[RMDB]
RNA sequence: GGGAACGACUCGAGUAGAGUCGAAAAGUUUAACUGAUUCAUGGAGUCCUUGAAAAGGGAGUUAGUUUUGUAUUUUACUAUUUCGUACCGAGAUCCGUCACAGGUGCCCCUAGCUGAGUAGGCUAAGCCACGAUGCUAGAUUCGUCUAGCAUCGUGGAAAAGAAACAACAACAACAAC
Reactivity to DMS in 0.01 (KOAc 150mM, MgCl2 10mM, bicine 150mM(pH8.5), 24C), signal-to-noise 2, nucleotides 027 to 126: g010u000u000u000a050a070c060u010g000a080u000u000c050a080u010g010g000a090g020u010c020c010u000u000g010a050a060a160a100g020g020g000a080g030u000u010a030g000u010u000u020u020g010u000a050u030u030u000u000a060c050u000a040u000u020u000c040g020u000a040c060c040g000a080g050a030u000c040c020g000u000c100a060c040a080g000g000u000g010c010c010c000c020u020a020g000c020u000g020a160g000u000a110g000g000c000u000a050a090g020
Reactivity to 2A3 in 0.01 (KOAc 150mM, MgCl2 10mM, bicine 150mM(pH8.5), 24C), signal-to-noise 4, nucleotides 027 to 126: g040u070u080u130a060a060c010u050g040a090u030u060c040a050u110g110g030a060g050u060c000c000u040u070g060a110a080a040a040g020g010g010a030g030u020u050a030g000u020u020u050u130g170u020a210u030u140u030u040a040c030u050a100u020u050u070c040g020u050a050c020c010g060a060g020a100u010c020c020g020u000c030a070c030a050g070g100u030g080c000c000c000c020u000a000g000c030u050g010a030g090u140a070g150g010c040u030a010a070g020